[RMDB]
RNA sequence: GGGAACGACUCGAGUAGAGUCGAAAAAAUUGGGUUAAAACGGUGGGGGACGAUCCCGUAACAUCCGUCCUAACGGCGACAGACCGCACGGCCCUGCCUCUUAGGUGUGUUCAAUGAACAGUCGUUCUGGCCCCUAAGGCGUUCGCGCCUUAGGGAAAUUACGAAUCGUAUUCGUACGAUUCGUAAUAAAAGAAACAACAACAACAAC
Reactivity to DMS in 0.01 (KOAc 150mM, MgCl2 10mM, bicine 150mM(pH8.5), 24C), signal-to-noise 2, nucleotides 027 to 156: a040a070u020u000g010g000g020u000u000a010a040a060a070c050g010g010u000g010g000g040g020g010a110c080g000a100u000c010c010c020g000u000a040a070c040a080u010c020c020g020u000c040c050u000a090a070c110g000g020c040g010a090c060a080g000a060c000c010g020c060a130c140g020g010c040c030c030u000g010c030c000u010c100u000u000a040g010g020u010g010u000g000u010u000c050a070a080u000g010a050a060c030a100g000u000c020g000u010u020c030u000g040g010c070c000c000c000u010a000a000g010g020c000g060u000u000c300g020c060g030c000c010u000u000a010g000g000g000a000a000
Reactivity to 2A3 in 0.01 (KOAc 150mM, MgCl2 10mM, bicine 150mM(pH8.5), 24C), signal-to-noise 3, nucleotides 027 to 156: a000a020u120u100g000g000g030u060u050a110a020a000a030c060g030g010u040g040g030g010g010g000a010c060g050a040u090c010c020c010g000u040a020a010c020a140u070c010c000g040u030c030c030u070a100a030c030g030g000c010g020a040c020a090g060a070c010c030g000c020a030c040g020g000c010c000c020u020g020c010c000u060c070u060u100a080g050g030u060g030u010g030u070u070c080a110a100u200g040a070a010c020a060g000u020c020g010u020u010c000u040g100g040c020c000c000c000u000a000a000g000g000c010g010u030u030c220g000c010g010c010c010u000u000a010g020g010g000a050a000